[RMDB]
RNA sequence: GGGAACGACUCGAGUAGAGUCGAAAACUGCCUCACCUGCGCGCGGUGGCGCUGGACUUUGUGGUGCAGCACUUCCCGGCUGUGUCUGCCACACCGGCCUGGGCCGCGCUGCCGCGAUCGGCCGCCGGUUCAGUAGUGGAUUCGUCCACUACUGAACAAAAGAAACAACAACAACAAC
Reactivity to DMS in 0.01 (KOAc 150mM, MgCl2 10mM, bicine 150mM(pH8.5), 24C), signal-to-noise 7, nucleotides 027 to 126: c090u000g010c030c010u000c060a080c050c030u000g010c070g000c030g010c030g010g010u000g000g010c040g020c020u010g040g010a090c070u000u010u000g020u000g010g020u000g000c020a010g010c000a040c090u000u000c020c010c010g000g000c020u000g000u000g000u000c140u010g010c020c030a040c050a060c120c060g000g000c040c120u010g010g000g020c030c030g010c020g000c010u000g010c030c030g010c020g000a040u000c050g010g010c030c040g010c030c060g010
Reactivity to 2A3 in 0.01 (KOAc 150mM, MgCl2 10mM, bicine 150mM(pH8.5), 24C), signal-to-noise 7, nucleotides 027 to 126: c010u050g020c010c010u060c020a070c020c010u060g000c050g000c000g000c010g050g020u030g020g000c020g000c070u210g030g030a160c040u090u130u150g040u040g010g040u120g020c010a010g010c010a020c040u050u020c010c000c000g000g000c020u010g010u030g050u080c120u100g030c010c000a040c000a020c020c030g070g020c000c050u140g010g070g000c010c010g000c000g000c000u010g010c010c000g010c010g030a040u030c030g020g010c010c020g010c010c020g050